An RNA of 177 nucleotides, treated with 2A3 and DMS and read out base by base. Values cover nucleotides 27 to 126. For DMS, 8,708 sequencing reads were counted. DMS adducts were read by reverse transcription with MarathonRT. The reactions ran in a buffer of 150 mM KOAc, 10 mM MgCl2 and 150 mM bicine (pH 8.5), at 24 C.

RNA sequence: GGGAACGACUCGAGUAGAGUCGAAAACAGUGCGUGGUGCCGCUGAAGGUGGACCCCUCCACUCCCGGGGAUGAGGUGAGGGACCUGGUGGGGUGCUCGUUCGUCAGGAGGGACCUCCUGGACCUGCAUCUAACCAAUUCUUCGGAAUUGGUUAGAUAAAAGAAACAACAACAACAAC
Reactivity to 2A3 in 0.01 (KOAc 150mM, MgCl2 10mM, bicine 150mM(pH8.5), 24C), signal-to-noise 5, nucleotides 027 to 126: c030a030g060u080g090c080g060u070g030g040u060g080c020c020g010c050u050g030a050a000g090g020u040g010g040a040c000c010c000c020u000c010c000a030c030u020c010c000c000g020g030g000g020a180u200g070a050g040g110u130g090a100g010g010g000a030c020c040u030g010g000u040g000g000g000g020u050g040c010u000c020g090u160u050c020g060u040c020a020g010g040a110g030g030g060a070c000c000u010c010c000u020g000g030a060c010c010u020g020c010
Reactivity to DMS in 0.01 (KOAc 150mM, MgCl2 10mM, bicine 150mM(pH8.5), 24C), signal-to-noise 5, nucleotides 027 to 126: c080a060g010u000g020c090g030u000g010g020u000g010c030c040g020c030u000g010a060a050g010g020u000g010g000a090c050c010c010c020u000c010c010a050c220u000c000c010c020g010g010g010g010a170u000g010a080g010g010u000g000a180g020g000g000a060c130c120u000g020g010u000g000g000g000g010u000g010c040u000c040g010u010u000c070g000u000c050a050g010g000a070g010g000g010a110c060c010u000c020c010u000g000g000a080c040c020u010g000c150